[RMDB]
RNA sequence: GGGAACGACUCGAGUAGAGUCGAAAAAAGGGGCGAGAAUUGGACAUUGUAAAUGGCCACCUGCAAUGUCUCUUAGGCUAAAUGGUGCAGCCAACUAAGGCAGGGCGGUUAAAAAACAGGAAAUUCACUCCCUAUCGUGAUUCGUCACGAUAGGGAGAAAAGAAACAACAACAACAAC
Reactivity to DMS in 0.01 (KOAc 150mM, MgCl2 10mM, bicine 150mM(pH8.5), 24C), signal-to-noise 2, nucleotides 027 to 126: a070a080g000g000g010g040c020g010a140g000a140a070u000u010g000g050a090c050a010u000u010g020u000a050a080a150u020g000g010c020c030a070c090c050u020g010c120a040a070u000g010u000c100u000c130u000u000a140g010g020c050u000a080a140a060u030g010g020u020g000c080a040g020c000c030a030a110c160u000a040a030g010g040c020a010g010g000g000c110g030g010u000u000a010a030a150a070a100a020c120a060g010g010a160a050a080u000u010c070a170